[RMDB]
RNA sequence: GGGAACGACUCGAGUAGAGUCGAAAAUUCCUUUGAACGGAAUAUUAAAAGCUAUGUGCAGUAACUUUUAAUAGGCAUACCACUUUUGCAUCAAGCUAUAAAUAAUCGCAUACUUUGAUAUUUAAUCAAUGCACCGUGUUUUCGAACACGGUGCAUUAAAAGAAACAACAACAACAAC
Reactivity to 2A3 in 0.01 (KOAc 150mM, MgCl2 10mM, bicine 150mM(pH8.5), 24C), signal-to-noise 1, nucleotides 027 to 126: u040u000c000c000u060u000u210g140a180a020c050g010g030a070a000u020a000u010u050a070a070a000a000g000c000u020a000u000g010u000g000c000a010g120u180a090a030c010u140u000u140u130a060a060u020a050g000g110c000a000u120a220c000c000a040c000u150u220u120u080g050c060a230u220c080a110a030g000c000u070a000u020a120a000a000u070a050a000u160c000g030c000a070u000a040c000u020u070u040g010a000u000a010u000u030u070a080a000u180c140
Source information:
The record gives the reactivity of an RNA of 177 nucleotides to 2A3. Values cover nucleotides 27 to 126. Reactivities are rounded to 0.1 and cut off at 0 and 3.